The record gives the reactivity of an RNA of 177 nucleotides to DMS and 2A3.
RNA sequence: GGGAACGACUCGAGUAGAGUCGAAAACACAGUGGAUGUGUGGUAAUGGAGUGUGAUCGUCAACAUGCCACCCACUCCUCAUUGACUAGUUAUUCGUCACUGUCGGUCUGCUGUGCGAGUAAGCGAGACCCCGAGUAAAUUUCGAUUUACUCGGGGUAAAAGAAACAACAACAACAAC
Reactivity to DMS in 0.01 (KOAc 150mM, MgCl2 10mM, bicine 150mM(pH8.5), 24C), signal-to-noise 4, nucleotides 027 to 126: c020a050c070a010g000u000g020g000a030u010g010u010g010u000g010g020u010a090a120u000g010g000a130g020u020g010u020g000a110u030c180g020u010c110a070a070c050a030u030g010c020c010a040c070c010c010a030c040u000c040c070u020c040a090u020u000g000a050c040u030a080g020u020u020a080u020u010c120g020u000c020a020c050u000g030u000c100g000g010u010c020u020g000c000u010g010u000g000c050g000a060g000u000a060a050g010c070g000a130g010
Reactivity to 2A3 in 0.01 (KOAc 150mM, MgCl2 10mM, bicine 150mM(pH8.5), 24C), signal-to-noise 7, nucleotides 027 to 126: c040a000c010a000g030u020g030g010a060u020g050u010g010u020g050g010u080a150a100u030g030g020a070g050u120g030u100g100a150u160c060g130u050c070a020a030c000a060u030g010c010c010a010c000c020c010a020c060u000c010c000u050c010a090u050u170g020a050c030u040a040g110u100u060a100u160u070c050g050u070c040a010c020u070g060u090c040g030g090u050c040u060g030c000u010g010u010g040c010g020a060g060u100a110a040g090c010g050a030g060
Source: RMDB library OK1LIB, as collected in RNAgym. The DMS profile rests on 10,358 reads. The reactions ran in a buffer of 150 mM KOAc, 10 mM MgCl2 and 150 mM bicine (pH 8.5), at 24 C. For 2A3, 7,537 sequencing reads were counted. For DMS the reverse transcriptase was MarathonRT. DMS (dimethyl sulfate) methylates the pairing face of unpaired adenines and cytosines.